[RMDB]
RNA sequence: GGGAACGACUCGAGUAGAGUCGAAAACAGCGAUCAUGACAUUUGCACGUUUUCACGUGACCCGGUCGCAGCCUUUGCCGCAGUGUUGCAAAUAUUUGGCCGAUUCUCUGGCGCUCUAUUUGCUAUACGCCAACGACGAAAACUAUGAUCCUAACAACAUUCAAACCGUUUUCGAACGGUUUGAAUGAAAAGAAACAACAACAACAAC
Reactivity to 2A3 in 0.01 (KOAc 150mM, MgCl2 10mM, bicine 150mM(pH8.5), 24C), signal-to-noise 7, nucleotides 027 to 156: c040a020g010c030g020a020u020c020a060u120g130a110c060a150u160u170u250g020c020a020c030g010u020u030u140u230c150a030c000g000u020g070a120c010c010c040g010g020u010c020g000c010a040g010c000c010u100u100u100g060c080c030g010c060a060g000u020g010u050u020g000c010a010a030a010u030a030u060u040u060g030g000c020c020g110a160u290u030c110u030c090u200g020g000c080g080c070u000c000u020a040u010u020u010g000c000u020a010u010a030c030g000c020c010a060a020c040g110a010c040g030a070a040a010a010c060u070a090u200g030a050u050c020c020u120a070a050c070a030a000
Reactivity to DMS in 0.01 (KOAc 150mM, MgCl2 10mM, bicine 150mM(pH8.5), 24C), signal-to-noise 2, nucleotides 027 to 156: c040a180g000c040g040a040u000c020a070u030g030a080c070a120u000u020u000g000c010a080c080g040u010u000u000u000c050a010c030g030u000g010a160c040c020c050g040g000u010c020g030c050a090g020c000c040u000u020u010g040c040c010g000c060a220g000u000g010u010u000g030c020a050a080a040u000a060u000u020u010g020g000c030c010g000a220u010u010c130u020c090u000g030g010c020g030c050u000c300u000a050u010u010u020g010c040u000a120u000a070c020g000c070c020a060a090c030g030a030c020g010a030a050a050a040c030u010a080u000g020a080u000c030c040u010a060a100c060a060a220
Chemical mapping of a 207-nucleotide RNA with 2A3 and DMS. For 2A3 the reverse transcriptase was SuperScript II with manganese. It was measured as part of the RMDB library OK3TST. The reactions ran in a buffer of 150 mM KOAc, 10 mM MgCl2 and 150 mM bicine (pH 8.5), at 24 C. Reactivities are rounded to 0.1 and cut off at 0 and 3. High DMS reactivity at an A or C suggests that its Watson-Crick edge is free. Values cover nucleotides 27 to 156.